Chemical mapping of a 177-nucleotide RNA with DMS and 2A3. The DMS profile rests on 1,113 reads. The RNA was probed in 150 mM KOAc, 10 mM MgCl2 and 150 mM bicine (pH 8.5) at 24 C. DMS adducts were read by reverse transcription with MarathonRT. Values cover nucleotides 27 to 126.
[RMDB]
RNA sequence: GGGAACGACUCGAGUAGAGUCGAAAAAGCGCCUGAUACGUCAGGCGCAAACCAUUUUUGGCAAUGGUAGAACUCACACCGGUAAGGUAAUGGGACCCGGUGGUUCUAGACUUGCCAACUAUGGUAAGAUUUGCUUUGCUUUCGAGCAAAGCAAAUCAAAAGAAACAACAACAACAAC
Reactivity to DMS in 0.01 (KOAc 150mM, MgCl2 10mM, bicine 150mM(pH8.5), 24C), signal-to-noise 1, nucleotides 027 to 126: a100g020c000g000c180c000u000g020a050u060a210c050g000u000c000a000g000g020c000g050c000a000a000a010c010c000a000u000u000u000u000u030g000g020c020a000a000u020g030g000u000a010g000a000a000c000u040c140a300c030a000c000c040g000g000u000a030a220g000g030u110a040a160u010g010g000g000a260c300c000c030g000g010u000g000g000u000u000c000u010a000g000a200c000u000u000g040c110c000a000a000c000u000a000u000g000g000u030a030a170
Reactivity to 2A3 in 0.01 (KOAc 150mM, MgCl2 10mM, bicine 150mM(pH8.5), 24C), signal-to-noise 4, nucleotides 027 to 126: a000g010c000g000c000c000u000g010a020u020a030c200g120u010c010a000g000g000c000g000c000a000a000a000c000c000a020u000u030u000u000u010g000g000c010a020a020u170g150g030u050a000g010a010a000c010u020c070a180c040a010c070c040g040g020u150a070a100g190g070u220a200a230u300g080g040g070a020c010c000c000g000g010u000g010g000u030u010c000u000a030g020a200c010u000u000g010c000c000a000a000c000u020a000u010g020g000u010a090a020